[RMDB]
Structure probing data (2A3 and DMS) for a 177-nucleotide construct.
RNA sequence: GGGAACGACUCGAGUAGAGUCGAAAAGAACUCGUUGGUGAGUACACCGGGGUGGUCCGUGAGGACACCAUGUGGUUCGUACCGAUAGGUGGCCCCGAGUACUCUGAGCCCUCCUAUCAGCACCGUCUAGUCACAUCCCAUUCGUGGGAUGUGACUAAAAAGAAACAACAACAACAAC
Reactivity to 2A3 in 0.01 (KOAc 150mM, MgCl2 10mM, bicine 150mM(pH8.5), 24C), signal-to-noise 1, nucleotides 027 to 126: g060a040a040c030u040c060g120u170u190g050g100u090g030a010g010u020a000c030a020c060c000g010g000g000g010u030g040g050u060c020c020g060u050g050a060g000g000a000c000a000c000c000a060u280g170u270g050g040u060u120c060g040u110a170c030c010g000a010u050a110g020g030u010g020g010c030c010c000c010g000a030g040u060a050c070u000c060u060g000a030g010c030c000c000u020c000c010u060a060u080c030a000g030c020a000c000c000g040u000c040
Reactivity to DMS in 0.01 (KOAc 150mM, MgCl2 10mM, bicine 150mM(pH8.5), 24C), signal-to-noise 2, nucleotides 027 to 126: g000a100a080c050u000c020g030u020u020g020g020u010g000a080g020u000a030c040a080c070c040g070g000g000g070u000g000g040u000c010c000g010u030g000a270g010g000a100c000a160c000c000a040u010g020u010g010g010u000u020c190g010u020a090c010c080g000a060u000a050g010g020u000g000g000c010c000c030c050g000a050g030u020a010c060u000c010u010g030a060g000c010c020c110u010c010c010u000a070u010c100a080g000c060a070c060c060g020u000c110
Values cover nucleotides 27 to 126. For DMS the reverse transcriptase was MarathonRT. Conditions: 150 mM KOAc, 10 mM MgCl2 and 150 mM bicine (pH 8.5), 24 C. For 2A3 the reverse transcriptase was SuperScript II with manganese.